[RMDB]
Structure probing data (2A3 and DMS) for a 177-nucleotide construct. The data come from the RNA Mapping Database (RMDB), library OK1LIB. The DMS profile rests on 13,206 reads.
RNA sequence: GGGAACGACUCGAGUAGAGUCGAAAAGUUGCCUGGACGCAGCCGUCAAUAAUGUGGAAGAAGCGCUUUCACGACAUCUUCAGGUCAGUAAUGGGUUGUAUCGUGCGAAGUGUGAGUACAUUGGUGAGCAUGAUUAGUGAUUCGUCACUAAUCAUGCAAAAGAAACAACAACAACAAC
Reactivity to 2A3 in 0.01 (KOAc 150mM, MgCl2 10mM, bicine 150mM(pH8.5), 24C), signal-to-noise 4, nucleotides 027 to 126: g060u050u040g060c000c020u040g040g010a020c040g020c050a020g050c040c010g060u060c030a020a060u140a110a100u200g050u070g130g030a100a060g050a110a030g030c020g000c010u020u010u010c000a000c010g010a020c010a040u020c010u200u160c020a050g090g080u080c020a030g090u150a110a070u100g070g000g000u040u050g030u060a090u080c030g000u010g020c060g020a010a030g010u020g020u030g030a030g030u030a020c030a100u040u100g060g010u090g060a000
Reactivity to DMS in 0.01 (KOAc 150mM, MgCl2 10mM, bicine 150mM(pH8.5), 24C), signal-to-noise 5, nucleotides 027 to 126: g010u010u000g000c030c020u010g000g010a070c080g010c070a080g010c020c040g020u010c080a070a110u030a050a050u010g010u010g020g000a130a090g010a150a180g010c060g010c000u000u000u010c020a020c000g000a060c120a030u000c050u020u010c030a040g010g000u020c120a070g000u040a100a090u000g000g000g010u000u020g000u020a060u010c010g010u000g000c160g010a050a050g010u010g010u010g000a070g000u020a040c040a100u010u020g000g000u010g010a150

DMS adducts were read by reverse transcription with MarathonRT. The reactions ran in a buffer of 150 mM KOAc, 10 mM MgCl2 and 150 mM bicine (pH 8.5), at 24 C.